[RMDB]
Chemical mapping of a 177-nucleotide RNA with DMS and 2A3.
The 2A3 profile rests on 5,411 reads.
Values cover nucleotides 27 to 126.

RNA sequence: GGGAACGACUCGAGUAGAGUCGAAAAGAUAUGGAAAUAUUACCUUAAGAGAUAUCGGAAACGAUGGAAGUUAACGGUACUGUAUUUCCUAAGUCAAAACCAAGUUGACCUUCGGGUCAACUUGGAACUAUAACAUGCACUUCGGUGCAUGUUAUAGAAAAGAAACAACAACAACAAC
Reactivity to DMS in 0.01 (KOAc 150mM, MgCl2 10mM, bicine 150mM(pH8.5), 24C), signal-to-noise 5, nucleotides 027 to 126: g000a050u000a300u010g010g000a020a030a000u000a010u010u000a010c010c010u000u000a030a030g000a060g010a300u010a000u010c020g020g000a090a080a190c000g000a010u000g000g010a240a240g010u000u000a010a020c200g020g000u010a020c300u000g000u000a000u000u000u010c000c000u000a070a150g000u000c010a040a070a050a160c000c000a000a010g020u000u010g000a010c000c000u000u000c160g040g000g020u000c000a010a010c000u000u000g000g010a010a040
Reactivity to 2A3 in 0.01 (KOAc 150mM, MgCl2 10mM, bicine 150mM(pH8.5), 24C), signal-to-noise 3, nucleotides 027 to 126: g010a010u070a050u110g000g020a000a020a000u030a010u030u090a020c020c000u040u020a100a000g180a000g000a300u020a000u090c010g000g050a070a050a030c010g000a010u020g040g020a040a060g090u020u030a080a040c210g010g010u030a090c110u110g030u040a010u000u010u000c000c000u000a080a020g060u030c030a020a020a060a130c000c000a000a000g010u000u010g010a010c010c020u030u090c300g080g000g000u000c010a000a000c000u000u000g000g000a000a000